Conditions: 150 mM KOAc, 10 mM MgCl2 and 150 mM bicine (pH 8.5), 24 C. This 177-nucleotide RNA was probed chemically with DMS and 2A3. For DMS, 1,611 sequencing reads were counted.
RNA sequence: GGGAACGACUCGAGUAGAGUCGAAAAGAUCAAUCUAGCAGCUAAUAUGUGGCGCUCCUUUCUCUACAGCAAUGUGGCUUUAUAUUUACCCGAUAAUCUCAAAUUUACGCCCAACAAUAUUCAGCUCGUACGUUAUUCUGUUCGCAGAAUAACGUACAAAAGAAACAACAACAACAAC
Reactivity to DMS in 0.01 (KOAc 150mM, MgCl2 10mM, bicine 150mM(pH8.5), 24C), signal-to-noise 2, nucleotides 027 to 126: g010a110u010c080a130a090u010c030u010a050g000c060a050g020c050u000a030a070u000a050u010g010u000g000g000c020g010c030u010c030c030u000u000u010c030u000c050u020a080c110a070g000c060a060a080u010g000u000g020g010c060u010u000u000a050u000a110u010u000u000a130c030c000c020g000a090u010a060a050u000c030u030c050a030a110a100u010u000u010a110c120g010c030c010c010a040a120c120a060a060u000a070u010u000c090a060g020c100u010c160
Reactivity to 2A3 in 0.01 (KOAc 150mM, MgCl2 10mM, bicine 150mM(pH8.5), 24C), signal-to-noise 3, nucleotides 027 to 126: g050a030u150c070a050a080u010c050u100a040g060c040a010g040c030u050a090a000u080a130u250g080u080g060g030c010g030c020u010c000c000u060u110u030c030u000c020u030a050c010a030g020c020a010a080u090g000u070g040g000c000u110u080u000a080u050a020u090u090u080a080c000c010c000g010a030u080a110a090u020c060u010c070a060a080a050u050u090u030a020c050g070c010c000c000a020a030c050a060a130u130a110u240u080c030a030g060c040u080c100
Source: RMDB library OK2TST, as collected in RNAgym.